An RNA of 177 nucleotides, treated with 2A3 and DMS and read out base by base. For DMS the reverse transcriptase was MarathonRT. For DMS, 1,599 sequencing reads were counted.

[RMDB]
RNA sequence: GGGAACGACUCGAGUAGAGUCGAAAACUAAAGCCCAAUUCUGUGAGACGAUUAAGGUGUUGCUGCAAAGUAUCGGGCACAAGUACAUUCUCAAGCAGGCUACGUUUUUGGCUUAUUUCCAAAUCACCGUAACGGGUGAUUUCGAUCACCCGUUACGAAAAGAAACAACAACAACAAC
Reactivity to 2A3 in 0.01 (KOAc 150mM, MgCl2 10mM, bicine 150mM(pH8.5), 24C), signal-to-noise 2, nucleotides 027 to 126: c030u060a070a050a060g020c050c010c020a020a080u190u080c070u030g100u040g060a080g000a050c050g060a110u180u070a080a050g040g000u060g030u070u100g070c030u020g070c020a070a000a130g090u050a110u180c100g000g010g060c040a000c020a050a030g010u050a010c020a070u140u000c050u000c010a010a070g000c030a030g050g000c030u040a040c070g040u010u040u030u080u070g030g000c000u030u050a050u060u060u000c000c000a040a080a100u120c060a060c110
Reactivity to DMS in 0.01 (KOAc 150mM, MgCl2 10mM, bicine 150mM(pH8.5), 24C), signal-to-noise 2, nucleotides 027 to 126: c130u000a050a100a110g000c000c000c050a140a100u010u010c080u000g050u010g010a120g010a060c110g010a080u010u010a100a090g010g060u000g010u010u000g020c080u000g000c110a040a010a110g040u010a060u000c070g010g000g000c020a020c070a080a080g010u010a110c070a080u000u000c060u000c030a050a110g020c080a060g010g010c010u000a060c130g000u000u000u000u000u000g000g000c040u000u000a080u010u010u010c010c050a040a080a070u000c150a040c130